[RMDB]
Conditions: 150 mM KOAc, 10 mM MgCl2 and 150 mM bicine (pH 8.5), 24 C.
The record gives the reactivity of an RNA of 177 nucleotides to 2A3 and DMS.
For 2A3, 471 sequencing reads were counted.
It was measured as part of the RMDB libraries RFM100 and RFMREP.
Reactivities are given for positions 27 through 126.
RNA sequence: GGGAACGACUCGAGUAGAGUCGAAAAGGCAUCAUAGUGAAACAUGUUUGCAGCGCCAACGAUGGCAUAUAACUGUAUUUCGUCUGGAGAGUCAAGUGAGGACUAUGAAGCACAAUGCGAUAUCUUCUUGGAUUGUAGACUUCGGUCUACAAUCCAAAAAAGAAACAACAACAACAAC
Reactivity to 2A3 in 0.01 (KOAc 150mM, MgCl2 10mM, bicine 150mM(pH8.5), 24C), signal-to-noise 1, nucleotides 027 to 126: g160g050c000a050u000c000a000u000a030g030u000g020a010a000a000c000a040u120g030u110u070u060g000c010a060g060c000g000c100c000a040a040c000g000a030u000g060g000c050a010u110a050u030a180a110c040u000g000u050a200u000u110u000c000g030u000c130u000g050g050a050g000a000g080u200c060a010a010g070u040g010a050g010g010a000c000u020a010u030g060a010a000g000c000a000c010a150a140u050g000c020g090a020u010a110u030c030u070u030c000
Reactivity to DMS in 0.01 (KOAc 150mM, MgCl2 10mM, bicine 150mM(pH8.5), 24C), signal-to-noise 2, nucleotides 027 to 126: g000g000c000a070u000c040a030u030a000g010u010g020a160a120a180c060a000u020g000u050u000u010g010c040a250g040c170g030c000c020a030a090c050g010a010u020g000g020c050a010u000a070u030a090a120c150u020g030u010a090u030u000u010c000g000u000c140u020g000g000a100g000a090g010u050c060a020a020g000u010g000a130g000g000a040c030u000a010u000g000a020a010g020c000a030c130a040a100u010g010c180g000a070u030a050u020c030u000u000c240